The record gives the reactivity of an RNA of 207 nucleotides to 2A3. The reactions ran in a buffer of 150 mM KOAc, 10 mM MgCl2 and 150 mM bicine (pH 8.5), at 24 C.
[RMDB]
RNA sequence: GGGAACGACUCGAGUAGAGUCGAAAAGUUUUCUGAAGUUUUGUGGUAUUAGCACAAUGCCUUGCACAUAAAAUGCUUUUAACUAACAUAUUUUUGACUAAGUUAAAUGAAUGAAGUUUACCUAGCUUGAUUCUAAAGUCAUCAGUUCUUUGCUGACCCACCAGUAGACUUUCGAGUCUACUGGUGGAAAAGAAACAACAACAACAAC
Reactivity to 2A3 in 0.01 (KOAc 150mM, MgCl2 10mM, bicine 150mM(pH8.5), 24C), signal-to-noise 1, nucleotides 027 to 156: g060u190u130u000u000c060u080g180a300a240g000u050u140u090u050g070u040g010g010u120a080u150u170a150g000c030a080c000a040a010u030g000c030c040u060u130g210c080a100c000a040u280a170a210a000a000u060g000c010u070u140u060u110a140a000c080u040a070a000c030a110u160a200u090u160u040u090u040g010a010c020u000a000a070g180u200u100a040a240a180u060g010a000a060u000g030a000a000g030u000u070u200a010c000c010u000a000g000c000u070u000g000a000u050u000c030u030a150a000a000g010u000c000a080u000c000a060g010u130u000c020u110u090u120g030c010u010g030a110c050